[RMDB]
RNA sequence: GGGAACGACUCGAGUAGAGUCGAAAAAAAGUUAUUCUGAGAAUGUGAUGUGGCAAUUCUUCAUGUACUUCCUUAACAUCCUGUACAAUAUGAGAAUUUGUGUUACACCAACAACAAUGUAUCCUCACUACAACAGAGAACCUAUAACAAAUGCCUCGAUAAUGCACAACUUCGGUUGUGCAUUAUCAAAAGAAACAACAACAACAAC
Reactivity to 2A3 in 0.01 (KOAc 150mM, MgCl2 10mM, bicine 150mM(pH8.5), 24C), signal-to-noise 5, nucleotides 027 to 156: a000a000a000g060u070u020a110u120u000c030u060g000a020g060a170a050u070g020u040g040a050u070g050u090g070g050c010a030a030u020u000c010u060u070c040a050u020g010u000a030c000u110u120c060c010u070u060a100a010c020a100u090c000c040u050g010u020a020c010a070a050u060a110u300g010a020g020a020a030u040u050u070g060u010g020u040u060a030c060a020c060c030a080a070c020a040a000c030a060a120u130g020u060a070u070c000c030u010c010a010c050u110a030c010a170a000c010a030g010a000g020a030a020c000c020u090a070u090a130a070c080a040a130a140u140g080c080c090u140c080
Reactivity to DMS in 0.01 (KOAc 150mM, MgCl2 10mM, bicine 150mM(pH8.5), 24C), signal-to-noise 1, nucleotides 027 to 156: a040a060a090g010u000u000a070u000u000c030u000g000a050g020a050a130u020g020u000g030a050u010g010u020g000g000c000a050a110u000u000c000u000u000c090a100u000g040u000a080c040u000u000c040c030u010u000a200a160c120a050u000c070c010u000g050u040a010c040a070a120u000a100u010g020a090g010a060a000u010u000u030g010u000g020u000u010a020c050a090c110c020a030a140c060a070a070c070a070a090u010g020u000a140u010c030c020u000c010a010c050u000a030c090a040a030c010a140g010a120g010a050a160c040c010u010a130u010a060a110c060a050a070a050u010g010c000c020u000c070